An RNA of 207 nucleotides, treated with 2A3 and DMS and read out base by base.
For 2A3, 3,687 sequencing reads were counted.

[RMDB]
RNA sequence: GGGAACGACUCGAGUAGAGUCGAAAAGAUAGAUAGUACUCGUAAAAACUCUCUUUCGCAGGCCGCGUAUUUUGAGAGACGAAGCCGUGAAGUAGCGAAAGCUACGACGAAGCGCGUGAUCGGCCGAUGCGCGAACAGCAUCACGUACGAGUACGAAAUCCAGUAUGAUCUUCGGAUCAUACUGGAUAAAAGAAACAACAACAACAAC
Reactivity to 2A3 in 0.01 (KOAc 150mM, MgCl2 10mM, bicine 150mM(pH8.5), 24C), signal-to-noise 5, nucleotides 027 to 156: g090a040u220a010g050a040u070a050g010u000a000c010u000c000g000u030a010a030a010a110a150c040u030c020u030c020u020u060u050c020g010c030a070g080g130c070c080g000c020g020u080a150u030u190u120u150g030a020g000a000g030a040c060g010a030a010g020c020c010g000u040g100a140a020g000u010a000g000c010g030a070a040a010g010c010u010a000c020g020a020c030g080a100a030g020c020g010c020g050u050g060a090u070c020g020g010c030c060g050a080u080g000c070g000c020g030a100a020c030a050g030c020a030u030c010a000c050g000u010a000c000g000a000g010u000a000c010g010a010a010
Reactivity to DMS in 0.01 (KOAc 150mM, MgCl2 10mM, bicine 150mM(pH8.5), 24C), signal-to-noise 2, nucleotides 027 to 156: g000a220u020a080g000a170u010a090g030u010a000c010u000c000g030u000a050a080a090a140a170c020u000c010u000c000u000u000u000c070g020c050a060g000g020c020c010g040c070g000u000a080u000u010u000u000g000a070g010a030g040a090c080g000a130a160g000c030c000g030u010g030a090a250g030u000a030g020c000g030a140a120a260g020c010u000a010c030g010a100c050g040a110a160g010c010g040c000g020u010g010a050u000c010g030g030c000c030g010a080u000g030c000g020c010g020a070a050c050a100g000c020a100u010c030a010c030g030u000a020c030g000a030g010u000a010c010g000a080a060
For DMS, 4,894 sequencing reads were counted.